Conditions: 150 mM KOAc, 10 mM MgCl2 and 150 mM bicine (pH 8.5), 24 C. Structure probing data (2A3 and DMS) for a 177-nucleotide construct. DMS adducts were read by reverse transcription with MarathonRT. Reactivities are given for positions 27 through 126. The 2A3 profile rests on 1,597 reads. Reactivities are rounded to 0.1 and cut off at 0 and 3.
RNA sequence: GGGAACGACUCGAGUAGAGUCGAAAAAUAUUCGGAAAUUACAGAAUAUAGUAUUGCUUUGUUGAGUUUCAACAAUUUAUAAAGUUAAUUCUGUACACACCGUCACGUAAAUUGAAAUGCAAUACUACUCCUAGCUAAAUUUCGAUUUAGCUAGGAGAAAAGAAACAACAACAACAAC
Reactivity to 2A3 in 0.01 (KOAc 150mM, MgCl2 10mM, bicine 150mM(pH8.5), 24C), signal-to-noise 2, nucleotides 027 to 126: a000u080a030u030u130c010g020g030a020a250a110u100u000a010c000a000g040a040a010u130a000u060a130g010u000a000u020u010g000c000u000u000u060g000u010u010g030a140g100u140u150u160c000a010a000c000a000a020u090u180u160a130u120a080a050a000g010u000u130a050a030u050u000c000u020g000u020a000c020a000c000a020c020c000g080u080c070a050c180g140u080a020a120a200u040u090g100a050a060a070u050g010c000a000a000u020a010c010u030a050
Reactivity to DMS in 0.01 (KOAc 150mM, MgCl2 10mM, bicine 150mM(pH8.5), 24C), signal-to-noise 3, nucleotides 027 to 126: a070u010a100u000u010c030g010g010a140a160a090u010u010a030c020a030g000a020a010u010a120u000a020g010u000a010u000u000g010c010u010u010u000g010u010u000g010a160g010u010u000u000c000a040a060c000a040a010u000u000u020a070u000a080a080a140g020u000u000a060a070u000u000c000u020g000u000a020c180a070c130a120c020c040g000u000c180a060c190g000u000a020a090a080u010u020g000a040a050a030u000g000c020a020a010u000a000c000u010a100